[RMDB]
RNA sequence: GGGAACGACUCGAGUAGAGUCGAAAAGAUAUGGACGAUUCAGCGAUAAGCUGGUAUCGGAAACGAUACACAGCUUUUGACGCUGGGUCCUAAGUCAAACCGCCGUAGUGUUCGCACUACGGCGGAACCGUAGUAGAAACUUCGGUUUCUACUACGGAAAAGAAACAACAACAACAAC
Reactivity to 2A3 in 0.01 (KOAc 150mM, MgCl2 10mM, bicine 150mM(pH8.5), 24C), signal-to-noise 4, nucleotides 027 to 126: g020a010u080a030u120g020g000a000c050g130a200u180u070c030a010g000c010g040a070u030a300a010g000c000u010g000g010u000a000u000c000g000g000a050a030a010c020g000a000u010a000c300a000c000a240g000c000u050u020u070u080g090a040c010g000c010u000g010g010g000u000c000c000u020a090a010g020u000c030a080a060a150c000c000g000c010c000g000u020a010g010u010g070u140u090c300g050c110a000c000u000a000c000g000g000c010g000g000a000a000
Reactivity to DMS in 0.01 (KOAc 150mM, MgCl2 10mM, bicine 150mM(pH8.5), 24C), signal-to-noise 4, nucleotides 027 to 126: g000a030u000a100u010g000g000a030c030g000a150u020u020c000a000g020c000g010a100u010a010a010g020c000u000g010g000u000a000u000c000g000g000a040a030a110c010g000a020u000a000c000a070c010a000g000c000u000u000u000u000g010a250c020g010c000u010g000g010g000u010c000c020u000a030a120g010u000c020a080a110a210c010c000g010c000c000g020u000a010g020u000g020u000u020c210g010c010a020c000u000a000c010g010g000c000g000g000a000a010